RNA sequence: GGGAACGACUCGAGUAGAGUCGAAAAUGGUGUUAAGUGGAAUAAGUGGCCCCAUAUACAUAUAUGUACAGGGGGCUACAUAUAUGUAUAUGCCCCCUCGCGUCAGUAUAAGUAGGUAUAAGGUGGAGGCCAUAAAUUAUUUCGAUAAUUUAUGGCCAAAAGAAACAACAACAACAAC
Reactivity to 2A3 in 0.01 (KOAc 150mM, MgCl2 10mM, bicine 150mM(pH8.5), 24C), signal-to-noise 3, nucleotides 027 to 126: u090g020g020u040g030u050u110a080a090g050u060g080g080a090a110u100a170a030g000u020g100g040c000c000c000c010a000u010a000u000a020c000a000u030a000u040a000u060g000u010a020c080a050g070g030g000g000g000c010u000a000c000a010u040a000u000a000u020g000u000a010u010a010u050g010c000c020c000c020c000u010c010g020c020g070u030c030a040g050u080a090u040a190a060g080u070a040g020g110u080a100u050a190a050g050g010u060g030g090a030
Reactivity to DMS in 0.01 (KOAc 150mM, MgCl2 10mM, bicine 150mM(pH8.5), 24C), signal-to-noise 2, nucleotides 027 to 126: u020g020g010u000g000u030u030a010a130g010u020g000g010a030a060u030a070a110g000u010g000g000c010c000c040c010a050u000a040u000a010c000a010u010a030u010a020u000g000u000a040c110a140g000g000g000g000g010c130u000a000c010a020u010a060u020a020u000g020u010a010u000a050u000g000c010c000c010c020c010u000c100g020c050g000u020c060a070g020u010a050u020a040a130g020u020a030g000g000u000a050u010a030a080g010g000u020g000g020a260

The record gives the reactivity of an RNA of 177 nucleotides to 2A3 and DMS. The reactions ran in a buffer of 150 mM KOAc, 10 mM MgCl2 and 150 mM bicine (pH 8.5), at 24 C. It was measured as part of the RMDB library OK1LIB.